[RMDB]
RNA sequence: GGGAACGACUCGAGUAGAGUCGAAAAUCGCAAAGGGUUGGGGUGCAUCCCUGAUCUCAUAAAAAGAGAUUCCAGCGCCCUUUCCUGCAUAACCGAGCCUGGGCUUAGCUUAGUCUUAAGAGGAGGUGCCCCAAAUCAGUGAAAGCAUGAAACCUCCCCUAACGAAAAGUUUCGACUUUUCGUUAGGAAAAGAAACAACAACAACAAC
Reactivity to 2A3 in 0.01 (KOAc 150mM, MgCl2 10mM, bicine 150mM(pH8.5), 24C), signal-to-noise 4, nucleotides 027 to 156: u090c020g000c050a080a070a090g020g010g020u040u020g000g010g010g010u020g030c020a120u120c030c010c030u010g010a010u000c000u000c030a060u300a080a130a050a050a020g020a000g000a000u070u040c070c050a040g020c000g020c010c000c000u010u010u000c010c000u040g020c040a090u060a100a070c030c060g020a020g020c000c020u030g010g010g030c010u070u110a030g020c010u050u090a050g050u040c010u070u080a100a070g030a030g040g000a000g030g000u020g010c010c020c020c030a040a120a070u090c010a000g030u040g160a150a020a020g050c050a070u090g050a070a050a040c010c010u010c000c030
Reactivity to DMS in 0.01 (KOAc 150mM, MgCl2 10mM, bicine 150mM(pH8.5), 24C), signal-to-noise 2, nucleotides 027 to 156: u010c040g010c070a140a100a170g000g010g000u000u000g000g010g020g070u000g050c030a120u010c020c020c010u000g000a010u000c000u000c000a080u030a090a140a150a290a210g000a030g000a040u000u010c010c010a280g010c040g000c020c000c030u000u000u000c020c000u000g000c090a100u000a090a060c040c010g000a070g040c030c040u010g010g010g020c030u010u000a020g010c020u000u010a060g030u000c060u000u000a080a220g000a190g010g000a080g030g000u000g030c000c000c010c010a060a130a170u010c040a090g010u010g020a120a050a060g030c030a140u000g010a050a070a110c010c000u000c040c000
This 207-nucleotide RNA was probed chemically with 2A3 and DMS. The reactions ran in a buffer of 150 mM KOAc, 10 mM MgCl2 and 150 mM bicine (pH 8.5), at 24 C. The 2A3 profile rests on 2,452 reads. For 2A3 the reverse transcriptase was SuperScript II with manganese. DMS adducts were read by reverse transcription with MarathonRT.